[RMDB]
RNA sequence: GGGAACGACUCGAGUAGAGUCGAAAAGAGAAAACCGGAAGGCCAGUGUCCUCUCGCAUGCAGCCGUUCUUCAGAUGUUGUUUUGGCGCUCGCCGCCUUAGCACGCUGAUAGCGACUGUACUGUCGUCUGUGAAGGCUACCUUCCCGAGGCGUCGUAGGUUCGUAAGGGGUUCGCCCCUUACGAACCAAAAGAAACAACAACAACAAC
Reactivity to 2A3 in 0.01 (KOAc 150mM, MgCl2 10mM, bicine 150mM(pH8.5), 24C), signal-to-noise 2, nucleotides 027 to 156: g110a000g000a000a070a000a080c080c040g010g000a000a010g000g030c010c000a020g020u000g010u040c010c000u000c010u010c000g020c000a000u010g000c010a010g010c020c020g020u040u040c050u050u010c000a070g050a300u070g060u250u000g010u000u080u020u000g010g000c020g020c090u160c180g290c300c000g000c020c000u000u010a000g010c000a000c020g000c000u000g010a000u020a000g010c010g000a000c000u000g000u030a010c090u050g200u230c030g000u000c040u010g180u190g020a000a000g000g010c000u010a020c010c000u010u030c030c010c010g020a060g030g030c090g020u090c030g020u060a040

Structure probing data (2A3) for a 207-nucleotide construct. Conditions: 150 mM KOAc, 10 mM MgCl2 and 150 mM bicine (pH 8.5), 24 C. It was measured as part of the RMDB library PDB130. For 2A3, 1,012 sequencing reads were counted. 2A3 adducts were read by reverse transcription with SuperScript II with manganese.